An RNA of 207 nucleotides, treated with 2A3 and read out base by base.

[RMDB]
RNA sequence: GGGAACGACUCGAGUAGAGUCGAAAAUAGCCGUUAUGCGCCAAGCGGUGUAGCGUCACUUUGAUGGCGGUACUAUGAAUUGAUGCAAGGUGUGGAGCGACCUUAAACAGUUCUGGUGGUGCUCUGAAAAACAAAUAGGCGUUCGCGCCUAUUUGAAGCGAAUGAUUGAGUUCGCUCAAUCAUUCGCAAAAGAAACAACAACAACAAC
Reactivity to 2A3 in 0.01 (KOAc 150mM, MgCl2 10mM, bicine 150mM(pH8.5), 24C), signal-to-noise 3, nucleotides 027 to 156: u120a000g000c000c010g010u030u030a080u170g050c020g010c030c000a000a050g020c000g030g000u050g030u050a040g110c000g000u010c010a010c090u190u130u270g180a220u120g060g010c040g000g070u000a030c020u060a030u200g080a050a040u070u040g070a060u100g040c030a040a020g000g000u020g000u050g040g010a020g020c040g010a010c000c000u090u140a060a120a010c020a070g010u010u010c020u040g080g030u070g020g000u020g010c000u000c040u060g090a180a040a020a000a010c000a000a010a000u000a000g000g000c000g030u020u080c210g000c010g000c020c000u000a000u020u010u000g000a020a000
The RNA was probed in 150 mM KOAc, 10 mM MgCl2 and 150 mM bicine (pH 8.5) at 24 C. Source: RMDB library M2RFPK, as collected in RNAgym.